[RMDB]
RNA sequence: GGGAACGACUCGAGUAGAGUCGAAAAUGGUAUCCUGAGUAAUACAUCACACGUGGAACGAUGUAUGAACCCGCGCGGACCACCGCGCAAGGCUAAAUACUAGUUGGCGACCGAUAGUGAACAAGUAAUGCCCAUAUCGGUUCGCCGAUAUGGGCAUAAAAGAAACAACAACAACAAC
Reactivity to 2A3 in 0.01 (KOAc 150mM, MgCl2 10mM, bicine 150mM(pH8.5), 24C), signal-to-noise 1, nucleotides 027 to 126: u110g010g000u100a010u000c000c000u000g000a000g000u060a000a100u030a040c000a010u110c010a000c000a000c110g070u260g100g020a040a000c000g000a000u220g020u000a000u000g080a040a000c090c000c000g000c000g010c000g000g000a140c000c090a280c020c000g000c010g000c000a000a000g000g090c000u050a000a000a000u060a060c070u010a000g060u040u000g000g000c000g000a030c030c000g060a150u000a040g090u070g130a300a000c010a010a000g300u300a000
Reactivity to DMS in 0.01 (KOAc 150mM, MgCl2 10mM, bicine 150mM(pH8.5), 24C), signal-to-noise 2, nucleotides 027 to 126: u000g010g020u050a190u000c010c000u000g010a090g020u000a050a010u000a060c030a000u000c010a110c070a100c150g040u030g000g060a050a130c100g000a060u040g050u000a010u040g000a120a130c220c010c090g000c010g030c010g010g030a230c240c300a080c020c000g000c030g000c000a020a010g000g030c300u000a050a050a040u000a030c000u010a090g030u010u000g000g000c040g000a050c040c010g000a090u000a030g000u050g010a110a040c100a000a060g020u000a090